[RMDB]
RNA sequence: GGGAACGACUCGAGUAGAGUCGAAAAAUCUUUGGUGGCGUAGCUUACGCCUACUUUGGAUGUGAGGAAGGUACUAUGUACUUUGUGCCUAGAGCUAAGUCUGUUGUCUCAAGGAUUGGAGACUCCAUUACGACACUCUUCGGAGUGUCGAAAAGAAACAACAACAACAAC
Reactivity to 2A3 in 0.01 (KOAc 150mM, MgCl2 10mM, bicine 150mM(pH8.5), 24C), signal-to-noise 5, nucleotides 027 to 129: a100u040c030u110u020u030g010g010u050g010g000c030g060u020a050g060c060u100u070a040c090g010c000c000u030a040c010u060u060u080g130g030a140u050g060u110g070a050g030g120a110a020g000g000u000a020c050u120a040u190g090u050a130c000u080u070u020g030u050g020c010c000u000a020g000a010g060c040u080a030a010g060u030c030u000g120u160u120g040u010c000u030c030a020a020g070g000a010u060u100g060g000a060g000a000c010u040c000c000a000u030u150a030
Reactivity to DMS in 0.01 (KOAc 150mM, MgCl2 10mM, bicine 150mM(pH8.5), 24C), signal-to-noise 4, nucleotides 027 to 129: a000u020c020u010u020u020g010g000u010g030g000c040g000u020a000g020c220u060u030a060c120g000c060c000u050a030c000u040u040u000g010g010a080u040g010u000g040a110g030g040a130a060g030g050u030a010c010u000a090u110g000u000a040c050u010u020u020g040u020g070c000c050u070a110g000a110g010c090u020a030a060g000u030c080u030g000u000u000g000u030c040u000c050a010a020g040g000a110u000u000g020g010a140g030a050c050u030c020c060a090u040u040a100

This 170-nucleotide RNA was probed chemically with 2A3 and DMS. The DMS profile rests on 18,654 reads. DMS adducts were read by reverse transcription with MarathonRT. The reactions ran in a buffer of 150 mM KOAc, 10 mM MgCl2 and 150 mM bicine (pH 8.5), at 24 C. For 2A3 the reverse transcriptase was SuperScript II with manganese. The data come from the RNA Mapping Database (RMDB), library 15KLIB.